The record gives the reactivity of an RNA of 177 nucleotides to DMS and 2A3.
[RMDB]
RNA sequence: GGGAACGACUCGAGUAGAGUCGAAAAGAAAAGCACGGCAAGCACAUGAAGCACAUGAAGCAGUACAAGCAGUACAAGCACAUCAAGCACUACAAGCAGUAGAAGCAGCCGAAGCACAUGAAAAAAAACAUACUGAACAGUUCGCUGUUCAGUAUGUAAAAGAAACAACAACAACAAC
Reactivity to DMS in 0.01 (KOAc 150mM, MgCl2 10mM, bicine 150mM(pH8.5), 24C), signal-to-noise 4, nucleotides 027 to 126: g010a070a070a080a130g010c010a080c080g000g020c050a080a090g030c070a060c090a050u000g010a090a090g030c050a060c100a040u000g020a070a070g020c060a090g010u000a030c090a070a090g010c060a070g010u010a020c080a050a070g010c010a050c070a030u000c100a050a060g000c060a090c020u000a050c060a060a030g000c100a060g010u010a040g010a100a070g000c040a050g000c010c030g010a060a040g010c020a030c070a050u000g010a000a000a000a050a030a050a070
Reactivity to 2A3 in 0.01 (KOAc 150mM, MgCl2 10mM, bicine 150mM(pH8.5), 24C), signal-to-noise 4, nucleotides 027 to 126: g040a000a090a010a000g030c010a000c030g020g020c040a030a050g020c010a030c020a080u110g060a070a010g040c020a020c010a080u080g040a040a030g000c030a000g010u030a010c030a070a040g040c020a010g050u030a020c020a070a060g000c030a020c000a060u080c030a050a050g010c020a010c040u080a020c020a090a050g080c030a010g060u070a020g020a070a020g000c010a010g020c020c010g030a040a000g050c020a010c000a080u180g140a100a020a000a000a000a010a000

The reactions ran in a buffer of 150 mM KOAc, 10 mM MgCl2 and 150 mM bicine (pH 8.5), at 24 C. It was measured as part of the RMDB library M2PK90.